[RMDB]
RNA sequence: GGGAACGACUCGAGUAGAGUCGAAAAAUCCUCAGGUUCAUAAGCGUGAUGAUUGGGUGUUCAUGCUCCAUGCAUGACAUGUCCCUCCUUUGAACCUUGUUACGACCUUGGCACAUUACCCAUCUGAAAAAGACGUUCGCGUUCGCGCGAACGUCAAGAUAAUUCUCCAGUUCGCUGGAGAAUUAUCAAAAGAAACAACAACAACAAC
Reactivity to DMS in 0.01 (KOAc 150mM, MgCl2 10mM, bicine 150mM(pH8.5), 24C), signal-to-noise 1, nucleotides 027 to 156: a100u000c000c020u010c090a100g020g020u060u010c010a030u000a030a040g010c120g060u010g020a150u010g010a120u000u000g000g020g000u000g020u000u010c000a010u000g000c000u000c160c260a150u010g030c020a020u000g000a000c060a060u000g010u000c050c010c000u000c090c000u000u000u000g000a040a000c000c010u000u000g020u000u010a110c080g000a110c060c050u010u000g020g110c070a060c040a100u000u010a150c040c000c010a130u000c010u000g000a060a130a120a200a180g000a050c000g030u000u000c000g070c010g040u010u000c280g050c000g060c020g030a010a010c010g050u010c000a000a000
Reactivity to 2A3 in 0.01 (KOAc 150mM, MgCl2 10mM, bicine 150mM(pH8.5), 24C), signal-to-noise 4, nucleotides 027 to 156: a010u040c000c010u030c020a000g010g010u000u000c020a030u050a270a050g030c080g160u070g080a140u080g030a110u200u220g050g000g000u050g040u110u050c000a000u000g000c000u070c190c110a110u290g010c000a010u000g000a020c010a020u070g100u060c030c010c000u030c000c000u010u020u010g010a010a000c000c000u010u070g050u010u090a060c060g030a030c010c000u030u070g010g000c040a050c010a150u030u080a070c020c000c000a050u040c080u110g060a120a040a030a050a050g010a000c000g000u000u000c010g010c000g010u050u020c160g020c000g000c000g090a000a000c000g010u010c000a000a000